[RMDB]
RNA sequence: GGGAACGACUCGAGUAGAGUCGAAAAGGGGACUGCAACCUGGCUGAUAAGCAGCUCGAUAAAUGCAAUAGUAACGCUUUCAGUAUCCUCUAGCGGAUCGUGGGGACUGCAACCUCUACGACGAUAGUGAUCAGAUACGGUUCGCCGUAUCUGAUCAAAAAGAAACAACAACAACAAC
Reactivity to 2A3 in 0.01 (KOAc 150mM, MgCl2 10mM, bicine 150mM(pH8.5), 24C), signal-to-noise 1, nucleotides 027 to 126: g000g010g000g030a070c070u070g000c010a000a060c020c000u010g050g010c010u030g020a110u010a280a020g000c000a010g020c020u010c070g180a220u190a100a120a050u150g060c060a050a150u020a110g070u050a130a070c080g050c040u000u040u040c010a010g010u050a120u040c000c000u090c000u090a060g050c070g120g060a110u010c020g000u040g000g000g030g010a010c050u110g020c100a020a040c000c010u050c050u040a020c010g110a010c000g010a020u070a020g110
Reactivity to DMS in 0.01 (KOAc 150mM, MgCl2 10mM, bicine 150mM(pH8.5), 24C), signal-to-noise 2, nucleotides 027 to 126: g030g030g010g010a100c130u000g050c130a100a090c030c030u000g020g010c000u000g010a050u010a090a040g020c030a160g000c080u000c190g000a100u000a060a070a130u000g000c120a100a130u000a070g000u010a090a140c160g000c030u000u000u000c000a010g000u010a090u000c000c000u000c030u000a050g000c040g000g000a100u000c040g000u000g010g000g000g020a050c050u000g010c260a070a030c050c000u010c040u000a030c030g020a040c060g010a090u000a010g000